[RMDB]
The record gives the reactivity of an RNA of 177 nucleotides to DMS and 2A3.
It was measured as part of the RMDB library OK2TRN.
The 2A3 profile rests on 12,345 reads.
2A3 is a SHAPE reagent: it acylates the 2'-hydroxyl of flexible nucleotides of all four kinds.
Conditions: 150 mM KOAc, 10 mM MgCl2 and 150 mM bicine (pH 8.5), 24 C.
2A3 adducts were read by reverse transcription with SuperScript II with manganese.
RNA sequence: GGGAACGACUCGAGUAGAGUCGAAAAUUCAGCGGCGAGCCAGGCGUAGGCCUGACUGCGCGUCAUCAGCUUGUCGCGCCAGAUGCGUUCGAAUGGGCGCUUGCAGCGGUUGCGAGCGUCGCGCAGCGCUCGGUAUGAAGUUCGCUUCAUACCGAGCAAAAGAAACAACAACAACAAC
Reactivity to DMS in 0.01 (KOAc 150mM, MgCl2 10mM, bicine 150mM(pH8.5), 24C), signal-to-noise 6, nucleotides 027 to 126: u010u000c100a160g010c020g020g010c000g000a020g020c020c070a080g010g010c010g030u020a070g010g000c070c040u000g000a090c030u000g010c000g010c000g010u010c080a100u000c190a130g000c050u000u000g020u000c020g010c020g020c080c090a110g000a090u010g000c020g010u000u000c090g010a120a100u010g000g010g000c010g000c000u010u000g010c030a060g020c200g010g010u020u000g010c010g000a030g010c000g030u000c010g010c030g000c050a060g010c140
Reactivity to 2A3 in 0.01 (KOAc 150mM, MgCl2 10mM, bicine 150mM(pH8.5), 24C), signal-to-noise 6, nucleotides 027 to 126: u070u030c040a010g010c000g010g000c010g010a000g000c010c030a060g030g020c020g050u080a040g080g090c040c050u070g070a060c010u040g010c010g000c010g080u040c020a160u040c020a010g020c020u010u030g030u040c000g000c010g000c020c010a050g040a190u130g020c020g030u030u150c070g090a180a120u220g070g010g000c010g010c000u010u010g000c020a080g070c080g300g140u260u060g010c010g010a000g000c010g000u010c010g000c000g000c000a030g030c040